[RMDB]
RNA sequence: GGGAACGACUCGAGUAGAGUCGAAAAUGCCUUCGGUCCACGAAGUUCACCAUUUAUAACAACAUGUUCUGUGCUGGCUUCCAUGAGGGAGGUAAAGAUUCAUGCCAGGGCGAUAGUGGGGGACCCCACCCUGCCCUAUCUUCGGAUAGGGCAGGGUAAAAGAAACAACAACAACAAC
Reactivity to DMS in 0.01 (KOAc 150mM, MgCl2 10mM, bicine 150mM(pH8.5), 24C), signal-to-noise 1, nucleotides 027 to 126: u010g020c190c010u000u000c000g000g020u020c050c050a190c130g040a050a020g040u010u000c000a090c040c010a090u000u020u000a080u020a140a110c110a120a040c180a050u010g000u000u000c050u010g030u000g010c030u000g000g010c040u000u010c030c080a090u010g020a110g020g010g020a040g020g010u000a080a100a100g000a080u020u010c040a050u020g000c020c050a070g010g000g000c060g010a050u000a030g010u060g010g010g000g000g000a160c060c000c040c050
Reactivity to 2A3 in 0.01 (KOAc 150mM, MgCl2 10mM, bicine 150mM(pH8.5), 24C), signal-to-noise 1, nucleotides 027 to 126: u090g050c000c000u000u110c030g050g030u110c050c040a090c040g010a040a020g010u060u070c050a050c020c000a010u020u250u000a290u030a100a060c090a000a000c020a090u160g010u030u000c010u060g130u200g010c010u010g050g010c000u010u000c000c010a060u130g040a150g100g070g010a000g000g030u040a130a150a000g110a070u070u160c000a030u140g000c010c010a010g050g000g000c010g070a060u030a060g030u060g010g020g010g040g030a030c040c020c000c000